[RMDB]
RNA sequence: GGGAACGACUCGAGUAGAGUCGAAAAUGCCGUAACGGCUAUCGGGACGUCUACCCAUUUCAUUAAGUAAACGCGCGGUUAACAUUGCCCCUGUAGCACCUAAUGGAUGACCUAAAGCAAUAGCGCCCUGCUCCCGGAGAUUCGUCUCCGGGAGCAGAAAAGAAACAACAACAACAAC
Reactivity to 2A3 in 0.01 (KOAc 150mM, MgCl2 10mM, bicine 150mM(pH8.5), 24C), signal-to-noise 1, nucleotides 027 to 126: u110g000c100c030g060u180a060a000c040g080g080c000u000a240u010c030g000g000g000a010c030g080u050c010u000a180c000c000c000a000u060u040u000c000a000u000u260a090a000g000u010a030a210a000c010g000c000g000c090g260g000u030u030a010a060c010a050u300u070g000c000c000c000c000u010g000u080a000g000c030a050c140c010u090a100a080u190g010g010a010u040g010a130c100c050u180a180a170a000g000c100a010a010u000a090g050c010g000c040c000
Structure probing data (2A3) for a 177-nucleotide construct.
Reactivities are rounded to 0.1 and cut off at 0 and 3.
The RNA was probed in 150 mM KOAc, 10 mM MgCl2 and 150 mM bicine (pH 8.5) at 24 C.
The data come from the RNA Mapping Database (RMDB), library OK1LIB.
For 2A3 the reverse transcriptase was SuperScript II with manganese.
Reactivities are given for positions 27 through 126.